[RMDB]
RNA sequence: GGGAACGACUCGAGUAGAGUCGAAAACCGGGGAAACCUACUCGAGCGAGGCGGAGAUCGAGCGCCAGUUCGUGCGCGGCGACCUGAAGUUGCUUCGGCUUCUUCUAGUUCGCGACCUGCGUGGAACCAACGUACUGUAGUUCGCUACAGUACGUUGAAAAGAAACAACAACAACAAC
Reactivity to 2A3 in 0.01 (KOAc 150mM, MgCl2 10mM, bicine 150mM(pH8.5), 24C), signal-to-noise 3, nucleotides 027 to 126: c020c000g000g000g010g040a100a120a010c030c000u010a020c010u010c010g010a020g020c010g000a050g000g050c030g020g060a110g020a170u180c090g050a030g120c010g020c010c000a020g030u050u060c050g050u060g010c030g000c000g030g000c010g000a000c000c000u000g000a020a020g030u030u050g000c000u030u060c230g070g000c010u020u000c020u010u010c000u000a020g000u020u070c010g020c040g070a220c010c030u060g020c010g000u040g030g030a020a010c030
Reactivity to DMS in 0.01 (KOAc 150mM, MgCl2 10mM, bicine 150mM(pH8.5), 24C), signal-to-noise 3, nucleotides 027 to 126: c070c040g020g000g020g000a190a140a070c060c020u010a030c030u000c000g000a060g010c030g000a100g010g030c040g010g000a100g000a080u000c070g020a090g010c040g010c030c040a120g010u000u000c040g010u000g020c010g010c000g000g010c000g000a020c040c030u000g000a010a020g000u000u000g020c010u000u000c190g030g000c000u000u000c000u010u000c000u010a050g020u000u000c000g010c010g000a120c050c100u000g000c020g050u000g000g010a070a070c080